[RMDB]
RNA sequence: GGGAACGACUCGAGUAGAGUCGAAAACCGAUUGGAUAUUGUGACGAACCUUGCAGAGUGAGUUCUAUUCAGCAAUGGAUAGUAUUUACGAAGUCAUGUAAAUCGUAAUAUCUAGAGGAAGGUGAAGGAUAGCCCUACUCUUCGGAGUAGGGCUAUCAAAAGAAACAACAACAACAAC
Reactivity to DMS in 0.01 (KOAc 150mM, MgCl2 10mM, bicine 150mM(pH8.5), 24C), signal-to-noise 1, nucleotides 027 to 126: c000c000g010a130u050u010g010g010a040u000a030u000u010g010u000g000a000c040g000a270a120c130c080u000u040g000c030a030g000a300g000u000g000a000g030u000u000c000u000a020u050u090c000a020g010c300a150a130u020g000g050a000u000a010g020u000a000u010u000u000a000c000g000a300a130g020u000c050a030u000g020u000a070a090a010u000c010g020u000a010a000u000a040u010c000u000a060g000a100g010g000a120a070g000g000u020g000a110a080g020
Source: RMDB library RFMREP, as collected in RNAgym. This 177-nucleotide RNA was probed chemically with DMS. For DMS the reverse transcriptase was MarathonRT.